Structure probing data (2A3 and DMS) for a 177-nucleotide construct.
The reactions ran in a buffer of 150 mM KOAc, 10 mM MgCl2 and 150 mM bicine (pH 8.5), at 24 C.
The data come from the RNA Mapping Database (RMDB), library RFM100.
[RMDB]
RNA sequence: GGGAACGACUCGAGUAGAGUCGAAAACCGGUUUUCCGACCCGUCCCCCGUCGGAAACCGGAUGGUAGCGGUAGUCUCAUUCCCCUCUCCGGGCUGCCGCUGUGUAGUGACAUGGCCGCUGUGGUAAUUUUUACCCACGAUUCGUCGUGGGUAAAAAAAAAGAAACAACAACAACAAC
Reactivity to 2A3 in 0.01 (KOAc 150mM, MgCl2 10mM, bicine 150mM(pH8.5), 24C), signal-to-noise 1, nucleotides 027 to 126: c010c000g030g010u030u040u040u040c000c000g000a010c020c000c020g070u050c000c010c000c000c000g000u000c000g000g000a000a000a000c000c020g000g010a030u020g130g120u110a000g000c000g000g020u000a010g000u000c020u000c070a070u070u060c020c000c000c000u060c000u050c040c020g000g010g010c040u020g000c000c000g000c010u000g010u000g010u000a130g040u050g040a030c000a050u020g090g040c040c000g040c060u050g050u080g060g010u040a070a140
Reactivity to DMS in 0.01 (KOAc 150mM, MgCl2 10mM, bicine 150mM(pH8.5), 24C), signal-to-noise 2, nucleotides 027 to 126: c010c010g020g000u000u010u010u020c000c000g000a000c000c110c160g020u000c020c000c000c090c270g000u000c000g000g000a000a000a000c010c020g010g000a010u040g020g050u050a030g000c040g010g020u000a020g000u000c000u000c150a220u030u010c020c000c000c140u030c060u040c130c060g030g000g010c000u010g010c050c000g000c020u000g000u020g010u020a060g020u020g020a080c060a070u020g000g000c010c020g020c020u000g000u010g000g020u050a050a050